Source: RMDB library 15KLIB, as collected in RNAgym. The record gives the reactivity of an RNA of 170 nucleotides to 2A3 and DMS. For DMS the reverse transcriptase was MarathonRT.

RNA sequence: GGGAACGACUCGAGUAGAGUCGAAAAAUAGGCUUAUCAAGAGAGGCGGAGGGACUGGCCCGAUGAAACCCGGCAGCCAGAAAUGGUGCCAAUUCCUGCAGCGGAAACGUUGAAAGAUGAGCCGAUGCGCCGUCGGGGUUCGCCCCGACGAAAAGAAACAACAACAACAAC
Reactivity to 2A3 in 0.01 (KOAc 150mM, MgCl2 10mM, bicine 150mM(pH8.5), 24C), signal-to-noise 2, nucleotides 027 to 129: a030u100a000g000g000c000u020u030a020u040c100a110a000g060a030g010a060g080g040c070g000g000a020g000g040g000a010c000u040g000g000c000c010c000g070a130u100g040a030a060a030c010c010c000g010g000c020a040g110c010c000a000g010a020a050a040u070g000g000u030g010c010c000a000a020u030u020c000c010u070g000c000a010g000c000g020g030a050a070a010c070g010u020u120g020a010a000a100g000a000u030g000a000g010c000c000g000a040u100g010c060g000c000
Reactivity to DMS in 0.01 (KOAc 150mM, MgCl2 10mM, bicine 150mM(pH8.5), 24C), signal-to-noise 2, nucleotides 027 to 129: a060u030a090g010g010c030u040u000a030u000c060a090a160g010a000g050a080g060g000c000g030g000a070g000g040g030a100c000u000g010g050c000c100c020g040a060u040g020a130a080a140c070c000c030g000g010c090a100g080c000c000a000g000a050a100a060u000g010g000u060g020c030c030a000a130u000u000c030c030u030g040c040a050g040c040g000g050a070a060a060c070g020u000u070g010a060a070a110g010a030u020g000a040g000c020c030g010a090u030g010c040g020c150

The 2A3 profile rests on 4,469 reads. The DMS profile rests on 7,560 reads. 2A3 adducts were read by reverse transcription with SuperScript II with manganese.